[RMDB]
RNA sequence: GGGAACGACUCGAGUAGAGUCGAAAAGCUAUACCGUUCGCGGUAUAGCAAAAUCUUUCCGAGAUGUACUUAUACGAGCCUAUUAGUCAACGGUUCGAGUCCAAACGGGUUACUUCGGUAACCCGAACACUUAGUGUGACUUCGGUCACACUAAGUGAAAAGAAACAACAACAACAAC
Reactivity to 2A3 in 0.01 (KOAc 150mM, MgCl2 10mM, bicine 150mM(pH8.5), 24C), signal-to-noise 3, nucleotides 027 to 126: g020c000u000a000u000a010c000c010g020u010u120c260g020c020g040g020u000a000u010a000g000c000a000a000a040a020u020c020u020u040u040c030c020g040a050g010a160u090g060u120a030c010u130u080a090u090a300c020g010a000g020c000c000u100a130u260u090a170g150u220c070a070a000c060g000g020u020u010c010g010a000g000u010c070c030a040a100a050c000g000g000g020u000u000a000c010u010u030c170g080g000u000a000a000c000c010c000g000a000a010
Reactivity to DMS in 0.01 (KOAc 150mM, MgCl2 10mM, bicine 150mM(pH8.5), 24C), signal-to-noise 3, nucleotides 027 to 126: g000c000u000a000u000a000c010c000g020u010u020c160g020c010g010g010u000a000u010a000g000c000a010a010a060a060u010c120u000u000u000c010c000g020a120g010a100u000g000u000a040c110u000u010a150u020a120c020g000a040g000c020c000u000a130u000u010a110g010u010c190a070a120c230g000g000u000u000c010g010a070g000u000c070c050a030a090a190c040g010g020g010u000u000a000c000u000u000c140g010g010u000a000a000c000c000c000g000a010a060
Structure probing data (2A3 and DMS) for a 177-nucleotide construct.
The RNA was probed in 150 mM KOAc, 10 mM MgCl2 and 150 mM bicine (pH 8.5) at 24 C.
The 2A3 profile rests on 3,049 reads.
Reactivities are given for positions 27 through 126.